Source: RMDB library RFMREP, as collected in RNAgym. Chemical mapping of a 177-nucleotide RNA with DMS and 2A3.
RNA sequence: GGGAACGACUCGAGUAGAGUCGAAAAGAGUGGGGAGAACGUGAAAUGCUCCGGCGCCAGAGGAUGUGGCUGCGGCCGAUUAGGUAGACGGUGGGGUAACGGCCCACCGUGCCAGUAAUCGGUACGGGCACCUAUUAUACUUCGGUAUAAUAGGUGCAAAAGAAACAACAACAACAAC
Reactivity to DMS in 0.01 (KOAc 150mM, MgCl2 10mM, bicine 150mM(pH8.5), 24C), signal-to-noise 3, nucleotides 027 to 126: g010a110g000u000g010g020g010g000a070g000a060a070c080g000u010g000a070a080a120u000g010c050u000c040c030g020g010c120g020c040c050a070g000a110g000g000a050u000g010u010g000g020c030u000g030c020g010g010c000c000g010a020u000u000a070g010g000u000a120g010a040c000g010g010u000g000g000g010g030u000a080a090c300g000g010c000c000c000a010c010c000g030u000g000c000c010a160g000u000a030a010u000c010g000g010u010a040c090g020g000
Reactivity to 2A3 in 0.01 (KOAc 150mM, MgCl2 10mM, bicine 150mM(pH8.5), 24C), signal-to-noise 2, nucleotides 027 to 126: g090a010g040u100g030g010g030g030a050g030a040a030c070g060u090g110a080a040a130u140g030c030u010c030c000g010g030c010g010c020c020a010g000a030g140g020a080u110g030u060g080g030c050u070g040c010g000g000c000c000g000a000u000u050a010g000g010u030a090g030a120c010g020g000u000g000g000g010g000u020a000a020c040g060g000c010c000c010a000c000c000g000u000g000c000c000a010g070u010a020a020u010c020g010g000u040a150c010g020g040
For 2A3 the reverse transcriptase was SuperScript II with manganese. Reactivities are given for positions 27 through 126. The DMS profile rests on 2,953 reads.